[RMDB]
RNA sequence: GGGAACGACUCGAGUAGAGUCGAAAAAAGUCGCAGCGUGGCCGGACCUAUGGCAGUAAUAUCUAUCUGGAUAUUAUCUUGGAAAUGAAUCCGGAUUUGUCUGUUUUUGAAAGCCAUGAGAUUGCGGGCGGUUUUACUGAUUCGUCAGUAAAACCGCAAAAGAAACAACAACAACAAC
Reactivity to 2A3 in 0.01 (KOAc 150mM, MgCl2 10mM, bicine 150mM(pH8.5), 24C), signal-to-noise 2, nucleotides 027 to 126: a020a020g090u080c020g000c000a000g030c010g000u000g000g020c020c010g050g020a040c030c020u120a190u160g000g010c000a010g000u120a000a160u050a050u120c040u100a070u020c000u020g020g010a000u020a120u240u080a050u110c090u080u220g150g020a070a130a070u090g080a080a040u000c000c020g020g000a050u040u120u030g000u000c010u000g100u000u090u000u170u070g090a090a000a000g000c010c010a000u000g000a000g050a110u040u050g000c000g000g010
Reactivity to DMS in 0.01 (KOAc 150mM, MgCl2 10mM, bicine 150mM(pH8.5), 24C), signal-to-noise 1, nucleotides 027 to 126: a010a040g000u020c040g000c040a060g000c020g000u000g000g050c000c020g040g030a230c290c210u030a050u020g000g000c080a030g040u070a010a040u020a060u000c050u030a060u020c260u000g000g030a000u010a020u000u000a010u000c030u060u060g020g000a010a110a030u010g010a070a090u000c000c020g020g000a070u000u010u020g000u000c010u060g030u030u000u020u000u110g000a270a180a170g000c000c040a090u010g080a030g000a130u070u000g000c000g000g000
An RNA of 177 nucleotides, treated with 2A3 and DMS and read out base by base. 2A3 adducts were read by reverse transcription with SuperScript II with manganese. Reactivities are rounded to 0.1 and cut off at 0 and 3. The RNA was probed in 150 mM KOAc, 10 mM MgCl2 and 150 mM bicine (pH 8.5) at 24 C. For DMS, 1,221 sequencing reads were counted.